[RMDB]
RNA sequence: GGGAACGACUCGAGUAGAGUCGAAAAGGCGAAAGGCGGGGUAAUUUUCUCGGUGGCUGACCAGUUUGGUAUCCCUAUCCGCUACAUUGGUGUCGGCGAACGUAUUGAGGAUUUGCGUCCGUUUAAGAAUAGCGCGAAAAUUCGUUUUCGCGCUAUUAAAAGAAACAACAACAACAAC
Reactivity to DMS in 0.01 (KOAc 150mM, MgCl2 10mM, bicine 150mM(pH8.5), 24C), signal-to-noise 1, nucleotides 027 to 126: g010g020c050g010a060a110a090g010g020c030g020g020g000g000u030a060a080u000u010u000u000c060u010c040g020g020u000g000g020c060u010g010a100c030c030a130g000u000u000u010g010g020u000a140u010c020c000c010u000a120u010c060c050g020c050u000a080c090a110u010u010g020g030u010g010u010c030g000g010c010g020a030a100c090g020u030a080u020u010g000a110g000g010a040u010u000u000g010c100g000u000c010c020g030u010u020u000a110a110g010